RNA sequence: GGGAACGACUCGAGUAGAGUCGAAAAGUUGACAGCCUGGGGAUCUAGGCACCUGUAGUUUUUGGUAGUGAUGGCUGCAACAGGGAUUCAGGCAGCUAUAUUACUUCUUUUGUAAUUGACCCAACAGGCUUACUUUUCUGUUCGCAGAAAAGUAAGCAAAAGAAACAACAACAACAAC
Reactivity to DMS in 0.01 (KOAc 150mM, MgCl2 10mM, bicine 150mM(pH8.5), 24C), signal-to-noise 1, nucleotides 027 to 126: g030u020u010g000a220c150a090g010c030c020u000g000g000g030g000a080u010c050u000a050g010g020c040a050c060c030u010g020u010a030g000u020u000u000u020u000g000g040u010a060g020u010g030a050u010g000g010c020u000g000c000a040a130c130a160g000g000g010a130u010u000c100a090g020g010c030a030g000c030u000a030u000a020u000u000a030c030u000u000c040u010u000u000u020g000u000a040a070u010u000g010a150c020c030c030a060a110c140a110g010